[RMDB]
RNA sequence: GGGAACGACUCGAGUAGAGUCGAAAAAAUGCGGUGUUUCCUUUGUCAUCAAAUUGUGAAUCAUCCAUUCCACUGAAUAGCAAAAUCUUUACUAUUUUGGUAUCUUCUAAUGUGGCUGCCUGAUGUAAUGGAAAUUCAUUAUCUAGAAGAUUUUUCAGACAAUACCAUUGUUCGCAAUGGUAUUGUCAAAAGAAACAACAACAACAAC
Reactivity to 2A3 in 0.01 (KOAc 150mM, MgCl2 10mM, bicine 150mM(pH8.5), 24C), signal-to-noise 4, nucleotides 027 to 156: a000a000u050g010c050g000g000u010g000u000u010u000c010c000u030u020u020g190u080c080a140u030c060a140a120a150u140u090g050u080g060a010a010u020c000a010u000c000c000a000u020u010c010c010a040c030u030g010a030a040u030a060g020c060a020a060a090a210u080c070u080u190u110a080c010u020a060u030u040u030u040g060g000u060a050u030c020u050u020c020u070a080a100u080g020u020g070g000c020u060g030c020c020u030g050a080u090g090u140a060a030u090g000g040a090a130a010u040u010c010a020u020u150a030u030c070u020a020g020a100a020g000a040u160u000u000u040u070c000a020
Reactivity to DMS in 0.01 (KOAc 150mM, MgCl2 10mM, bicine 150mM(pH8.5), 24C), signal-to-noise 2, nucleotides 027 to 156: a030a020u010g010c030g010g000u000g010u000u000u010c010c010u020u000u010g030u000c140a150u010c120a070a070a060u020u000g020u010g010a040a030u010c020a080u000c020c010a040u000u000c010c030a170c070u000g000a000a030u000a000g040c020a020a080a190a180u010c150u000u000u010a040c020u000a030u000u000u000u000g020g010u000a080u000c040u010u000c040u000a090a090u000g020u000g000g040c030u000g000c010c030u000g010a130u000g020u000a030a080u000g010g010a040a100a080u000u010c000a030u020u000a060u010c130u010a100g010a090a090g010a080u000u000u000u050u050c060a300